About this RNA:
Structure probing data (2A3 and DMS) for a 207-nucleotide construct. Conditions: 150 mM KOAc, 10 mM MgCl2 and 150 mM bicine (pH 8.5), 24 C. Values are in units of 0.01, from 0 to 300, in steps of 10. DMS adducts were read by reverse transcription with MarathonRT.

[RMDB]
RNA sequence: GGGAACGACUCGAGUAGAGUCGAAAACAUUAAUUCAUUUUGAAAGGUUGCUGGAUUGAAUGAAGUCUUUCUCAGUCUCUGUGAGAAGCUCAACUAAUUUUGAUGUAGAGCAAAAUUGGGGUCAAAACUUCAUCAACAGACAAUGUGUAUAGAACUAAUCCAUACCUGGAUUCGUCCAGGUAUGGAUAAAAGAAACAACAACAACAAC
Reactivity to 2A3 in 0.01 (KOAc 150mM, MgCl2 10mM, bicine 150mM(pH8.5), 24C), signal-to-noise 2, nucleotides 027 to 156: c020a030u030u170a120a110u120u190c090a020u140u240u130u100g190a190a090a040g100g000u070u080g000c040u030g010g110a260u080u000g030a100a060u010g000a010a010g000u000c020u020u000u000c010u000c000a000g090u060c030u100c090u300g070u040g020a000g000a030a000g010c000u020c070a050a070c030u050a010a050u000u020u000u040g050a050u090g070u180a060g060a010g100c040a010a010a010a010u020u010g020g000g000g000u040c030a000a000a100a000c000u000u000c000a030u020c010a010a010c010a010g080a080c020a000a040u140g060u000g010u050a070u060a190g020a010a010c030u030a020
Reactivity to DMS in 0.01 (KOAc 150mM, MgCl2 10mM, bicine 150mM(pH8.5), 24C), signal-to-noise 1, nucleotides 027 to 156: c060a110u000u010a050a170u000u010c040a130u010u000u030u010g000a100a150a170g010g030u010u000g020c000u030g010g000a300u020u000g000a100a090u010g010a110a090g020u020c040u000u000u010c030u020c020a070g020u010c030u030c080u000g040u000g000a110g020a040a030g020c060u010c010a060a100c020u010a030a040u000u000u010u010g010a110u010g000u000a130g000a270g000c010a040a010a000a060u010u010g040g000g000g030u010c060a070a080a050a020c020u000u000c020a060u000c010a050a060c010a050g020a060c040a050a070u000g030u000g040u000a090u000a130g000a030a130c070u000a110